Record summary: The record gives the reactivity of an RNA of 207 nucleotides to DMS and 2A3. For DMS, 8,318 sequencing reads were counted. Conditions: 150 mM KOAc, 10 mM MgCl2 and 150 mM bicine (pH 8.5), 24 C.

RNA sequence: GGGAACGACUCGAGUAGAGUCGAAAAGCGUACUACCGAGUCUUGGAUUUAGAAAGGGAGAAAUACUCAUAGUAUCCCAAAUAGGAUACUAUACGCGAGUAUUUCGAAGAACUUUCUUGUCAGACUCGGUAUCGCAAAAGUGGUGUUCGCACCACAAGUACUUCCUAGUAUUCGUACUAGGAAGUACAAAAGAAACAACAACAACAAC
Reactivity to DMS in 0.01 (KOAc 150mM, MgCl2 10mM, bicine 150mM(pH8.5), 24C), signal-to-noise 3, nucleotides 027 to 156: g030c030g030u000a070c100u000a010c010c010g000a030g010u000c000u000u020g030g010a040u010u010u010a020g010a000a020a020g000g000g000a300g000a030a010a010u000a010c010u010c000a170u000a000g010u000a000u030c000c000c000a040a130a190u010a070g010g000a040u000a000c010u000a020u000a080c180g030c250g010a040g020u000a000u000u000u000c010g000a070a190g020a150a180c010u000u000u010c000u000u000g010u000c000a070g010a020c000u000c000g020g010u000a000u000c010g020c030a090a050a120a120g010u000g000g020u000g000u000u000c040g030c010a020c010c000a000c020a020a300
Reactivity to 2A3 in 0.01 (KOAc 150mM, MgCl2 10mM, bicine 150mM(pH8.5), 24C), signal-to-noise 6, nucleotides 027 to 156: g000c010g020u060a070c040u010a000c040c000g000a000g010u000c030u100u200g150g000a080u300u300u030a020g000a020a010a000g000g000g000a030g010a010a010a000u000a000c010u010c010a000u000a000g000u010a010u030c010c020c020a150a210a040u220a060g000g000a000u000a000c010u010a010u030a070c280g030c060g090a000g010u000a000u000u000u000c010g030a060a000g010a000a000c000u010u000u000c000u000u000g010u010c010a010g000a000c000u010c000g000g000u000a000u000c000g000c000a010a020a020a080g000u000g030g000u020g020u050u170c260g020c070a000c010c010a000c010a030a000